[RMDB]
RNA sequence: GGGAACGACUCGAGUAGAGUCGAAAACUCUGCGGGGAAGCUGACCCCGAACCCAUGAGUGGGCUGCCUUGGCACCUGGGGAGCGAACCCCUGCAUACCGGGGUUCUUGGAGCUCCAGCAGCAAGACCUCGUUUACACAGUUCGCUGUGUAAACGAGAAAAGAAACAACAACAACAAC
Reactivity to DMS in 0.01 (KOAc 150mM, MgCl2 10mM, bicine 150mM(pH8.5), 24C), signal-to-noise 2, nucleotides 027 to 126: c050u030c040u010g030c020g000g010g040g040a090a110g020c090u000g000a210c010c030c000c000g010a050a080c040c020c010a070u000g020a100g010u000g000g010g020c160u000g010c050c020u020u010g010g020c040a110c160c040u000g000g000g000g000a070g010c060g010a020a010c010c000c000c020u020g050c190a130u020a080c210c150g000g010g020g000u000u000c000u020u010g020g010a150g000c010u000c050c050a040g020c040a040g000c090a070a060g000a140c100
Reactivity to 2A3 in 0.01 (KOAc 150mM, MgCl2 10mM, bicine 150mM(pH8.5), 24C), signal-to-noise 1, nucleotides 027 to 126: c030u010c060u080g020c000g000g050g000g010a090a000g030c070u100g110a120c060c010c000c010g020a030a040c000c010c030a050u120g090a050g160u150g000g030g020c000u060g010c000c030u060u150g070g000c020a020c050c020u070g000g000g000g000a000g100c050g000a020a010c000c000c000c010u020g000c070a040u040a090c040c060g000g010g020g000u020u060c010u030u130g070g030a030g040c010u060c020c000a000g030c000a050g000c040a010a020g020a040c000
Background:
The record gives the reactivity of an RNA of 177 nucleotides to DMS and 2A3. Reactivities are given for positions 27 through 126. For 2A3 the reverse transcriptase was SuperScript II with manganese. Conditions: 150 mM KOAc, 10 mM MgCl2 and 150 mM bicine (pH 8.5), 24 C.